[RMDB]
Conditions: 150 mM KOAc, 10 mM MgCl2 and 150 mM bicine (pH 8.5), 24 C. This 177-nucleotide RNA was probed chemically with DMS and 2A3. For DMS the reverse transcriptase was MarathonRT. It was measured as part of the RMDB library OK2TST. The DMS profile rests on 3,142 reads. DMS (dimethyl sulfate) methylates the pairing face of unpaired adenines and cytosines.
RNA sequence: GGGAACGACUCGAGUAGAGUCGAAAACUCGGAAGUCAUGGAGCAGGACGCCGAUGGGCGCCGCACCUUCCGCUAUCUCAAGGGGCCGAUUUUUGCGCAGCUUCUGAUGGCUGACGAAAUCAACCGAACCUCAUUUACUCUUCGGAGUAAAUGAGGUAAAAGAAACAACAACAACAAC
Reactivity to DMS in 0.01 (KOAc 150mM, MgCl2 10mM, bicine 150mM(pH8.5), 24C), signal-to-noise 3, nucleotides 027 to 126: c170u000c000g010g000a030a020g010u000c130a170u020g000g000a120g010c050a110g040g010a110c020g020c000c020g000a170u020g010g010g020c000g030c030c010g020c030a090c120c010u010u000c020c030g010c210u000a060u010c030u000c030a120a120g010g000g010g020c140c050g020a020u000u000u000u000u010g020c100g020c000a010g000c010u000u000c180u010g010a100u010g020g000c000u000g020a060c010g000a010a010a060u010c040a070a100c020c030g000a090
Reactivity to 2A3 in 0.01 (KOAc 150mM, MgCl2 10mM, bicine 150mM(pH8.5), 24C), signal-to-noise 3, nucleotides 027 to 126: c020u000c000g000g040a020a010g060u090c090a120u220g080g070a160g070c130a180g050g050a140c000g000c010c010g200a300u220g210g000g000c010g020c020c000g000c000a020c010c000u020u020c010c010g000c020u060a110u020c010u010c050a050a080g050g010g030g010c080c020g020a020u020u000u010u050u220g120c220g000c010a010g000c000u120u030c060u280g130a120u260g020g000c010u000g010a000c010g010a020a020a000u020c010a020a060c010c000g020a020